[RMDB]
RNA sequence: GGGAACGACUCGAGUAGAGUCGAAAAGGACAAUUCGUUGUCCAGGUUUACCUUUGUGAAACGCCGAGCACCACUACCCACCCACGCAGACCCAUUGGGUCUGCGGUGGAGGUGGUGUAUCGUUUCACUCUGGUCAAAUAGCUGGUUCGCCAGCUAAACAUUCUAAUCCAUUCGUGGAUUAGAAUGUAAAAGAAACAACAACAACAAC
Reactivity to 2A3 in 0.01 (KOAc 150mM, MgCl2 10mM, bicine 150mM(pH8.5), 24C), signal-to-noise 5, nucleotides 027 to 156: g010g000a010c020a030a040u110u100c300g070u180u010g000u000c000c010a020g130g020u020u110u130a020c000c000u000u010u000g000u000g000a010a010a010c030g040c150c190g060a100g020c010a010c000c000a010c010u110a160c030c020c010a030c020c020c020a100c100g000c010a000g000a000c020c010c060a250u240u300g000g000g000u020c000u000g010c020g010g000u000g000g010a030g000g000u000g000g000u000g000u000a020u020c000g000u000u000u000c000a000c000u000c000u010g000g000u010c000a010a040a140u060a070g000c000u010g000g060u040u020c190g050c080c010a000g000c000u050a040a000
Reactivity to DMS in 0.01 (KOAc 150mM, MgCl2 10mM, bicine 150mM(pH8.5), 24C), signal-to-noise 4, nucleotides 027 to 156: g000g030a050c000a020a060u010u000c210g020u000u000g000u000c000c030a120g000g010u000u000u000a040c010c010u000u000u020g020u000g000a030a020a020c010g030c210c060g020a300g010c010a030c130c000a020c000u000a090c050c020c030a230c110c010c050a110c050g000c010a000g000a030c000c000c000a280u010u020g080g050g020u000c010u000g010c010g010g000u010g020g010a300g020g010u000g010g020u000g000u000a020u000c010g000u000u000u000c010a010c010u010c030u000g010g020u000c080a050a070a140u010a050g020c000u000g010g000u000u010c300g020c000c000a030g020c000u000a010a120